[RMDB]
RNA sequence: GGGAACGACUCGAGUAGAGUCGAAAACAGCCGCAGCCCUUUCCAAUCGCGGCCAUCGCAUCGUCUAUGUUUCGGGCGAGGAGGCGGUGGCACAGAUACGCCUGCGCGCACAGCGCCUUGGCGUUGACUCCUAUGGAUACUUCGGUAUCCAUAGGAGAAAAGAAACAACAACAACAAC
Reactivity to DMS in 0.01 (KOAc 150mM, MgCl2 10mM, bicine 150mM(pH8.5), 24C), signal-to-noise 4, nucleotides 027 to 126: c080a100g010c010c030g020c010a140g000c030c020c030u010u000u020c030c050a150a090u000c080g010c110g010g000c010c010a010u000c010g040c020a190u000c000g020u000c010u000a150u010g010u000u000u000c030g020g000g010c010g010a040g000g010a190g000g030c020g030g010u000g000g010c030a040c110a060g020a140u000a020c020g020c020c000u000g010c100g020c020g020c170a140c220a210g000c000g020c010c300u000u000g010g010c010g030u000u000g000a230
Reactivity to 2A3 in 0.01 (KOAc 150mM, MgCl2 10mM, bicine 150mM(pH8.5), 24C), signal-to-noise 5, nucleotides 027 to 126: c010a030g030c020c010g000c010a030g010c000c020c000u060u080u020c050c020a080a090u120c080g010c080g090g000c010c010a010u010c000g010c010a040u010c000g040u000c000u020a100u110g090u020u050u070c040g010g010g010c020g000a040g100g080a130g130g040c010g000g010u000g000g030c030a030c020a070g080a030u070a040c010g000c000c010u030g030c020g000c000g020c050a160c100a230g000c000g010c030c050u060u100g020g000c010g010u000u020g020a030
Structure probing data (DMS and 2A3) for a 177-nucleotide construct. Values cover nucleotides 27 to 126. The reactions ran in a buffer of 150 mM KOAc, 10 mM MgCl2 and 150 mM bicine (pH 8.5), at 24 C. For 2A3, 9,025 sequencing reads were counted. The data come from the RNA Mapping Database (RMDB), library OK2TST. The DMS profile rests on 4,388 reads.